[RMDB]
RNA sequence: GGGAACGACUCGAGUAGAGUCGAAAAAUUGAUGCGAAGGGGGGACGGAGAAGGCUAUGUAGGCCGGGCGACGGUUGUCCCGGUUUAAGCGUGUAGGCUGGUUUUCCAGGCAAAUCCGGAAAUUGAAGUCACGUUAGUGUUUCGACACUAACGUGACAAAAGAAACAACAACAACAAC
Reactivity to DMS in 0.01 (KOAc 150mM, MgCl2 10mM, bicine 150mM(pH8.5), 24C), signal-to-noise 1, nucleotides 027 to 126: a060u040u020g030a040u020g000c060g030a060a050g030g000g010g030g000g000a040c090g000g000a090g000a140a040g010g010c010u000a090u020g000u000a030g000g000c020c030g020g000g010c300g010a110c160g000g060u010u040g000u020c020c000c000g010g010u000u000u000a020a130g020c100g000u000g000u010a070g000g000c010u000g000g020u010u000u020u000c020c050a050g000g010c060a080a040a140u000c020c030g030g000a050a020a200u000u000g010a050a160